[RMDB]
RNA sequence: GGGAACGACUCGAGUAGAGUCGAAAAUGACCGUUCGCGGUCAGAUAAUUCCUAAGUCAUAUGGAGGAGCUUGGGAGACUACUUCGGAAACGAAGUUGGUCUUUGAUCAAGCUCUCCCCACCCAUAUGAUAUGGAUGAUGCCGGCGUUCGCGCCGAACGGUUAACAAAACUUCGGUUUUGUUAACCGAAAAGAAACAACAACAACAAC
Reactivity to DMS in 0.01 (KOAc 150mM, MgCl2 10mM, bicine 150mM(pH8.5), 24C), signal-to-noise 1, nucleotides 027 to 156: u010g010a010c000c000g000u020u020c300g070c040g050g020u000c000a010g020a100u000a040a170u000u000c000c000u000a070a260g020u000c000a040u000a020u030g010g000a240g020g000a010g040c000u000u010g010g000g010a010g010a010c000u000a020c030u000u000c000g010g000a180a090a300c010g000a010a020g020u030u010g080g010u000c010u000u000u000g010a170u010c030a020a030g010c010u000c030u000c070c000c000c100a300c170c010c000a020u000a000u020g010a020u010a270u000g000g010a050u010g020a170u010g010c020c010g020g050c020g000u000u010c180g060c060g010c030c000g020a010a050
Reactivity to 2A3 in 0.01 (KOAc 150mM, MgCl2 10mM, bicine 150mM(pH8.5), 24C), signal-to-noise 3, nucleotides 027 to 156: u050g000a000c010c010g010u030u070c300g020c020g110g000u010c000a000g000a000u250a080a140u090u030c000c010u030a140a030g010u000c000a000u000a000u010g000g010a030g010g000a010g020c000u000u000g020g040g000a010g000a000c000u000a000c000u030u010c000g040g020a080a080a050c010g000a010a000g020u050u140g020g010u010c000u080u050u050g100a110u110c000a000a000g000c000u010c000u010c000c000c010c010a040c000c000c010a000u000a000u000g010a000u010a030u140g060g010a020u120g020a040u180g120c100c010g000g000c010g020u070u160c280g000c030g020c120c010g020a060a050